[RMDB]
RNA sequence: GGGAACGACUCGAGUAGAGUCGAAAAGGUGCUCAUGUGAAAAACGAUGCCGCUUUACGCGAAGCGAAACCGGAUAUUCGCUUAAUUGACCUGACGCCUGCUGCCAUCGGCCCUUACUGCGUGCCGGAUACUUAGCUUCAUUCGUGAAGCUAAGUAUAAAAGAAACAACAACAACAAC
Reactivity to 2A3 in 0.01 (KOAc 150mM, MgCl2 10mM, bicine 150mM(pH8.5), 24C), signal-to-noise 9, nucleotides 027 to 126: g020g000u040g010c030u020c030a030u070g020u050g100a090a030a020a000a010c030g020a030u050g020c000c010g020c030u070u050u110a140c050g030c070g140a120a040g000c000g010a030a020a010c030c010g020g000a060u060a230u130u050c010g010c020u030u060a110a040u120u080g070a040c010c010u010g010a010c010g020c010c010u030g040c040u060g020c010c010a060u060c010g010g010c020c010c000u060u150a150c080u090g080c020g060u080g010c010c000g000g010
Reactivity to DMS in 0.01 (KOAc 150mM, MgCl2 10mM, bicine 150mM(pH8.5), 24C), signal-to-noise 9, nucleotides 027 to 126: g010g010u000g000c170u000c020a030u000g010u000g000a040a060a070a080a070c040g000a030u000g010c070c010g020c150u000u000u000a100c080g020c060g010a120a090g020c020g010a020a040a060c150c020g000g010a070u010a070u000u000c010g010c030u000u000a060a100u000u000g010a070c080c030u000g000a060c050g000c020c010u000g010c110u000g010c030c030a100u000c020g010g000c010c020c040u000u010a080c150u000g010c100g020u010g010c020c010g010g000